[RMDB]
RNA sequence: GGGAACGACUCGAGUAGAGUCGAAAACAGUUCGAUUUCUCUGACCCAUACUUUGAUUCUGGUGUCGUUAUGGGGAUUUUGAAAGAUAACGACGAAAUCAAGACAUAUGACGACUUAAAAGGAAAAAUACUCACUAUCACUUCGGUGAUAGUGAGUAAAAAGAAACAACAACAACAAC
Reactivity to DMS in 0.01 (KOAc 150mM, MgCl2 10mM, bicine 150mM(pH8.5), 24C), signal-to-noise 1, nucleotides 027 to 126: c020a030g000u010u000c050g000a300u010u000u000c020u000c000u010g020a220c000c000c000a180u010a040c080u010u000u020g030a100u040u000c110u010g000g000u000g020u000c000g010u020u000a010u010g000g000g000g010a150u000u000u000u000g010a020a140a090g000a140u000a020a020c070g010a250c020g000a010a020a030u000c000a040a060g010a130c030a110u010a090u000g000a100c050g000a010c120u000u000a100a010a150a130g010g030a030a060a060a080a170
Reactivity to 2A3 in 0.01 (KOAc 150mM, MgCl2 10mM, bicine 150mM(pH8.5), 24C), signal-to-noise 1, nucleotides 027 to 126: c020a000g020u010u020c020g050a170u000u080u000c050u010c000u000g090a090c000c000c050a010u040a130c090u070u100u140g060a010u150u000c020u090g130g000u070g020u050c000g010u010u020a000u050g020g090g030g040a040u040u080u000u140g180a230a100a060g150a080u130a130a040c080g040a010c010g010a030a000a000u020c030a020a030g150a080c040a010u150a020u090g040a010c020g010a020c000u060u100a050a040a040a040g040g000a020a040a060a020a030